[RMDB]
RNA sequence: GGGAACGACUCGAGUAGAGUCGAAAAACGCUACAGAAAACGGAUUAGCGGGAUCACCUAAAGACGAAGACGGAAUCAUAAUGACUAACAAGCGAGGAAACCAACCUGUUAGUACUUUCCUACGCACGAUCCUACCCUCGUUCGCGAGGGUAGGAUCAAAAGAAACAACAACAACAAC
Reactivity to 2A3 in 0.01 (KOAc 150mM, MgCl2 10mM, bicine 150mM(pH8.5), 24C), signal-to-noise 2, nucleotides 027 to 126: a010c000g000c030u020a090c010a050g210a180a110a030a050c030g160g020a130u090u000a010g050c000g000g020g000a020u050c030a050c050c000u050a100a030a000g060a020c000g040a020a000g020a000c020g000g030a020a000u040c000a040u070a260a030u130g020a020c000u050a030a010c020a000a040g000c030g070a010g010g070a140a040a000c040c000a010a050c000c010u030g000u020u040a000g030u030a080c060u040u000u020c000c000u110a050c000g050c030a020c100
Reactivity to DMS in 0.01 (KOAc 150mM, MgCl2 10mM, bicine 150mM(pH8.5), 24C), signal-to-noise 2, nucleotides 027 to 126: a140c000g050c000u000a050c160a190g010a070a190a020a110c240g040g000a080u000u050a000g000c050g000g030g020a070u000c010a140c050c010u010a080a090a030g030a120c030g000a090a010g020a020c090g040g030a000a020u000c130a070u050a030a010u000g000a000c000u000a050a170c160a000a230g000c190g000a130g120g000a120a110a050c120c140a080a130c100c000u000g000u000u030a000g040u000a000c060u000u000u000c050c000u000a000c200g100c030a230c140